This 177-nucleotide RNA was probed chemically with DMS and 2A3.
RNA sequence: GGGAACGACUCGAGUAGAGUCGAAAAGUCACGCCGGAGCAAAUCAACAACACGAGCCUGAUGUUGAUGGAGCAGGGCUAUGCUGGGCGAGUCGCUACACUGGUUAACCGAUACCAGGACGGCGAGGGGUGAAGGAAUUGUUCGCAAUUCCUUCACCAAAAGAAACAACAACAACAAC
Reactivity to DMS in 0.01 (KOAc 150mM, MgCl2 10mM, bicine 150mM(pH8.5), 24C), signal-to-noise 3, nucleotides 027 to 126: g030u020c090a090c070g000c030c010g010g000a140g050c090a090a130a060u000c030a000a050c000a070a090c050a050c160g000a050g000c120c110u010g000a070u010g040u000u000g000a030u000g010g020a140g040c030a070g020g000g010c040u020a100u010g000c080u000g000g010g020c040g000a080g010u000c010g010c010u000a140c240a180c010u000g000g000u000u000a120a110c220c220g000a070u010a030c010c010a010g000g000a090c200g010g000c000g000a020g030g000
Reactivity to 2A3 in 0.01 (KOAc 150mM, MgCl2 10mM, bicine 150mM(pH8.5), 24C), signal-to-noise 2, nucleotides 027 to 126: g050u040c020a010c050g000c020c050g070g070a070g020c010a020a040a110u080c020a020a030c000a000a020c010a020c080g130a010g070c030c120u060g010a080u010g040u070u000g010a060u040g030g030a060g050c050a070g000g090g000c010u030a060u160g060c040u080g000g070g000c040g000a030g030u000c010g000c000u050a050c060a050c120u010g000g000u040u030a070a080c070c030g020a010u090a060c000c000a020g000g010a030c040g020g040c040g000a040g030g040

For DMS the reverse transcriptase was MarathonRT. It was measured as part of the RMDB library OK2TRN.